Background:
Structure probing data (2A3) for a 207-nucleotide construct. For 2A3 the reverse transcriptase was SuperScript II with manganese. The data come from the RNA Mapping Database (RMDB), library OK3TST.
RNA sequence: GGGAACGACUCGAGUAGAGUCGAAAACGCAACAGCAACGAGAUGUGCUCCAUCGGGCAGUGAUAACUUCUUGGCAACCCCAACCUUAAAAAUUCGACUUCAAUUCAAUACAUGUGACCAGAUAAACACAGCUUCAAGCGCAUUACUCGCUCCAUAACUACGCAUCCAGGUUCGCCUGGAUGCGUAGAAAAGAAACAACAACAACAAC
Reactivity to 2A3 in 0.01 (KOAc 150mM, MgCl2 10mM, bicine 150mM(pH8.5), 24C), signal-to-noise 1, nucleotides 027 to 156: c050g060c090a120a090c010a040g000c030a050a110c000g010a010g000a130u090g020u050g000c040u030c020c000a160u120c030g010g000g030c000a050g000u000g020a000u020a220a040c040u040u100c030u070u140g000g000c060a010a010c070c000c000c000a000a070c010c010u200u210a120a000a000a000a170u190u210c070g030a050c030u040u010c020a090a140u130u080c000a050a090u190a060c070a030u240g000u040g090a100c060c000a000g050a080u160a020a050a000c010a000c000a050g000c050u070u070c030a000a000g000c000g000c000a000u100u160a070c030u040c060g000c000u020c030c000a020u060a110a010